The data come from the RNA Mapping Database (RMDB), library RFM100. Chemical mapping of a 177-nucleotide RNA with 2A3 and DMS. Conditions: 150 mM KOAc, 10 mM MgCl2 and 150 mM bicine (pH 8.5), 24 C.
RNA sequence: GGGAACGACUCGAGUAGAGUCGAAAAUUUAAAAAGUCAACGGCAACUAAGCAUGCUUCAAGAAUUAGCUUUUUUCUGUUCAGAUCUCGAAAACAUUCAGCGGCUCAGUGAUUGUCGAACAAUAGAUGGCGAUAAAGAAAUUCGUUUCUUUAUCGCCAAAAGAAACAACAACAACAAC
Reactivity to 2A3 in 0.01 (KOAc 150mM, MgCl2 10mM, bicine 150mM(pH8.5), 24C), signal-to-noise 2, nucleotides 027 to 126: u140u170u200a090a110a020a000a000g020u040c020a020a000c000g020g000c000a010a000c070u070a010a030g010c020a090u120g030c000u120u120c000a120a090g000a080a100u130u080a090g050c010u120u020u010u020u020u010c090u020g070u020u040c010a040g000a180u020c090u070c200g060a000a090a020a000c020a040u000u020c010a010g000c040g020g000c000u000c030a010g020u030g200a260u040u000g020u010c010g040a090a040c020a010a010u110a120g130a090u120
Reactivity to DMS in 0.01 (KOAc 150mM, MgCl2 10mM, bicine 150mM(pH8.5), 24C), signal-to-noise 1, nucleotides 027 to 126: u010u000u100a040a190a080a140a050g000u050c000a100a110c000g030g000c000a140a000c000u000a000a060g000c020a020u020g060c000u000u030c080a190a120g000a060a000u050u000a040g000c090u000u000u000u000u000u000c030u000g070u000u010c270a040g000a070u010c000u030c050g000a080a120a050a050c200a030u000u010c100a000g000c060g000g000c000u000c030a000g050u010g000a000u020u000g000u000c000g080a060a170c100a050a000u000a180g050a060u010